[RMDB]
RNA sequence: GGGAACGACUCGAGUAGAGUCGAAAAUGGAGUCCAGCUUCACCACUUACUAGCUGUGUGAGGCAAGGAAGUUAUUUAACCUGUGUCUUAUCUGUUAGGUUCCUCAUCUGUCAUGGAGCUAGUAUAGUACCUGCCUCAUAGGAUGCUUGUUAGGAUAACUCAGGGAUUUAUUCGUAAAUCCCUGAGUAAAAGAAACAACAACAACAAC
Reactivity to 2A3 in 0.01 (KOAc 150mM, MgCl2 10mM, bicine 150mM(pH8.5), 24C), signal-to-noise 4, nucleotides 027 to 156: u110g010g030a080g040u050c040c020a060g020c000u020u040c010a020c030c010a020c030u060u120a100c060u100a020g030c070u040g010u020g010u010g150a010g030g000c020a010a020g020g020a040a010g090u140u100a110u070u170u100a060a050c010c020u070g020u020g010u040c030u040u120a120u060c020u020g070u060u080a060g010g040u020u050c000c010u050c010a120u050c030u120g110u070c050a090u060g030g000a010g000c010u040a020g090u030a080u050a080g050u030a020c010c000u020g030c000c010u030c010a010u020a020g050g000a060u060g020c060u020u040g040u050u080a050g060g070a040u150a090
Reactivity to DMS in 0.01 (KOAc 150mM, MgCl2 10mM, bicine 150mM(pH8.5), 24C), signal-to-noise 2, nucleotides 027 to 156: u010g010g000a070g010u000c020c020a170g000c030u000u000c030a070c010c020a190c060u010u010a120c090u000a050g020c040u000g050u020g020u010g020a040g020g010c030a060a050g010g000a150a110g020u000u000a130u000u000u010a080a080c030c000u000g000u010g020u010c030u000u000a050u010c040u000g010u010u000a100g020g000u010u000c020c030u000c030a110u000c070u020g020u000c090a120u000g030g010a030g000c020u010a060g020u000a110u010a100g040u000a050c010c010u010g010c000c000u000c010a040u000a140g010g000a050u000g000c050u000u010g020u000u000a060g000g010a130u010a090
Notes:
Conditions: 150 mM KOAc, 10 mM MgCl2 and 150 mM bicine (pH 8.5), 24 C. Chemical mapping of a 207-nucleotide RNA with 2A3 and DMS. DMS adducts were read by reverse transcription with MarathonRT. 2A3 adducts were read by reverse transcription with SuperScript II with manganese. It was measured as part of the RMDB library OK3TST. For 2A3, 2,342 sequencing reads were counted.